[RMDB]
RNA sequence: GGGAACGACUCGAGUAGAGUCGAAAACAGGAGUGAGACCAUCUCAAAAAAACACUAAAAACAACCCUAUCUGGGCUUGGUGGUACACAUCUGUGGUCUCAGCUGCUUGGAGGCUGAGGUGGGAGAAUUGCUUGAGCCCCAGAGGUGGGGGCUGCAGGCAUAUGUUAUAUUUCGAUAUAACAUAUGCAAAAGAAACAACAACAACAAC
Reactivity to DMS in 0.01 (KOAc 150mM, MgCl2 10mM, bicine 150mM(pH8.5), 24C), signal-to-noise 1, nucleotides 027 to 156: c060a040g000g020a080g010u010g010a120g020a040c020c000a040u020c030u030c010a000a000a070a170a090a090a140c100a210c080u040a040a050a120a100a050c000a050a050c010c000c000u000a190u010c150u000g010g000g040c020u000u000g020g010u000g000g010u010a100c080a040c050a090u000c020u000g060u020g020g010u000c000u010c010a080g000c040u000g000c070u000u000g040g000a120g040g030c040u000g000a060g020g010u000g000g000g000a060g010a120a080u000u000g010c000u000u010g010a070g030c000c010c010c040a070g010a120g030g020u000g010g030g000g000g050c010u010g010c100a130g040
Reactivity to 2A3 in 0.01 (KOAc 150mM, MgCl2 10mM, bicine 150mM(pH8.5), 24C), signal-to-noise 2, nucleotides 027 to 156: c030a020g050g020a050g050u030g000a150g010a040c000c010a050u040c120u060c120a090a080a030a030a030a090a050c080a060c110u220a150a130a080a070a040c060a050a070c040c020c010u130a170u160c170u150g000g010g040c050u030u070g020g000u010g000g030u100a020c070a010c010a090u050c050u050g050u040g020g030u010c000u010c010a050g000c000u070g020c010u070u120g070g040a030g050g000c060u030g020a030g030g050u070g000g030g020a100g050a100a110u120u090g030c010u040u080g040a020g010c010c000c000c010a050g060a030g090g070u100g000g020g010g020g010c020u030g030c000a030g080